[RMDB]
RNA sequence: GGGAACGACUCGAGUAGAGUCGAAAAGAUAAUGUCUUCGGACAUUAUCCACGCCUAAAGGCUUUUAUUAAUUAGCUAAGCCUGCUAAUUAAAAUGGCAUUAACAACUGUCCAUUCGUGGACAGUAAGAGCAAUAACCAUUUCGAUGGUUAUUGCUCAAAAGAAACAACAACAACAAC
Reactivity to DMS in 0.01 (KOAc 150mM, MgCl2 10mM, bicine 150mM(pH8.5), 24C), signal-to-noise 2, nucleotides 027 to 126: g000a010u000a000a000u000g000u020c010u000u010c190g010g000a020c000a000u000u000a000u000c000c030a110c270g000c000c000u000a050a140a090g020g000c020u010u000u010u010a110u000u000a030a000u000u000a000g010c020u000a060a140g030c260c180u000g010c010u000a020a010u000u010a000a010a080a020u000g000g030c000a090u020u000a020a080c280a140a070c000u000g000u000c000c000a050u000u010c160g020u010g000g010a010c000a020g010u000a030a070
Reactivity to 2A3 in 0.01 (KOAc 150mM, MgCl2 10mM, bicine 150mM(pH8.5), 24C), signal-to-noise 2, nucleotides 027 to 126: g000a000u010a000a000u010g010u010c010u020u050c210g070g000a000c000a000u000u000a000u010c000c010a020c070g000c010c020u120a170a100a020g150g000c000u110u070u030u000a220u110u040a050a010u000u010a020g020c010u060a120a100g170c010c080u040g000c020u000a030a020u020u010a010a010a000a050u030g000g010c010a050u100u190a140a020c070a030a010c010u000g000u000c010c000a030u020u070c220g120u030g000g000a000c000a000g000u000a000a040
This 177-nucleotide RNA was probed chemically with DMS and 2A3. Reactivities are rounded to 0.1 and cut off at 0 and 3. The reactions ran in a buffer of 150 mM KOAc, 10 mM MgCl2 and 150 mM bicine (pH 8.5), at 24 C. For DMS the reverse transcriptase was MarathonRT. For 2A3 the reverse transcriptase was SuperScript II with manganese. The data come from the RNA Mapping Database (RMDB), library M2PK50.